Conditions: 150 mM KOAc, 10 mM MgCl2 and 150 mM bicine (pH 8.5), 24 C. An RNA of 207 nucleotides, treated with 2A3 and read out base by base. The 2A3 profile rests on 645 reads. The data come from the RNA Mapping Database (RMDB), library OK3TST.
RNA sequence: GGGAACGACUCGAGUAGAGUCGAAAAGCCUGGAUGAAAACAGCUGCAGACCUUUCUGUCAUGAUGGUCUUCUCUUCUGGGCCUUACAAGAGAAAACAGACACACUCAGGGUAUGCUAGGAAGGGGCCCUGAUCCUCUAUCAAUGAUGGCUCCUUCAUACUAUCGCAUCGUUCGCGAUGCGAUAGUAAAAAGAAACAACAACAACAAC
Reactivity to 2A3 in 0.01 (KOAc 150mM, MgCl2 10mM, bicine 150mM(pH8.5), 24C), signal-to-noise 1, nucleotides 027 to 156: g000c020c030u040g090g020a100u000g010a040a210a090a090c040a030g050c060u110g020c050a010g010a040c020c000u070u210u160c090u170g270u200c110a110u300g030a010u000g000g010u000c000u090u000c000u000c000u070u120c040u020g070g000g000c020c040u140u130a040c130a150a020g040a000g000a110a110a060a000c050a000g120a000c040a000c030a030c050u060c030a010g080g000g000u080a060u070g020c020u050a000g030g020a000a000g000g000g010g000c000c000c000u010g020a040u080c080c020u050c050u160a120u080c110a170a180u150g140a040u090g000g020c000u010c000c000u000u040c010a040